[RMDB]
RNA sequence: GGGAACGACUCGAGUAGAGUCGAAAAGAGGAACAAUCAGGCCGCAGCAUUUGUGGUUCACCAAUAUCCACUGUUCUGCAGCCUCUGCUGCUGAUACCCAGGCAAACAGUGUCUGGAGUGGACCUCUAGCAAACUCCAACAGACCUGCAGCUGACGGCGUUUUAACCUAGUUCGCUAGGUUAAAACGAAAAGAAACAACAACAACAAC
Reactivity to DMS in 0.01 (KOAc 150mM, MgCl2 10mM, bicine 150mM(pH8.5), 24C), signal-to-noise 2, nucleotides 027 to 156: g020a080g000g000a160a040c060a130a120u000c050a090g010g030c000c010g030c020a050g000c090a090u000u010u040g030u000g000g030u020u000c110a300c160c130a030a090u000a210u000c020c010a030c070u000g000u000u000c040u000g000c000a080g000c030c000u000c080u000g000c000u000g040c010u010g020a110u000a040c050c010c000a230g000g040c000a050a100a100c080a100g000u020g030u010c000u010g040g020a130g010u000g000g000a150c050c010u010c010u000a100g010c080a090a040a120c030u010c030c030a050a040c040a120g000a020c050c000u000g030c020a110g020c030u000g020a090c070g040g000
Reactivity to 2A3 in 0.01 (KOAc 150mM, MgCl2 10mM, bicine 150mM(pH8.5), 24C), signal-to-noise 4, nucleotides 027 to 156: g020a010g030g020a080a080c030a050a120u200c070a090g010g020c020c040g000c010a010g000c030a070u110u190u250g010u000g040g020u080u080c050a020c120c020a140a090u120a060u200c010c010a010c000u020g030u060u000c000u010g000c000a010g000c020c010u030c040u060g000c020u010g000c000u020g010a020u060a070c000c000c020a000g020g020c010a080a190a110c030a190g150u020g000u050c020u010g000g040a100g010u030g000g020a030c010c000u020c010u010a010g060c040a030a040a080c040u020c040c020a040a030c020a060g050a090c030c000u020g010c010a010g000c000u030g030a050c050g050g020
The record gives the reactivity of an RNA of 207 nucleotides to DMS and 2A3. 2A3 adducts were read by reverse transcription with SuperScript II with manganese. Conditions: 150 mM KOAc, 10 mM MgCl2 and 150 mM bicine (pH 8.5), 24 C. For 2A3, 2,450 sequencing reads were counted. Values cover nucleotides 27 to 156. The data come from the RNA Mapping Database (RMDB), library OK3TST.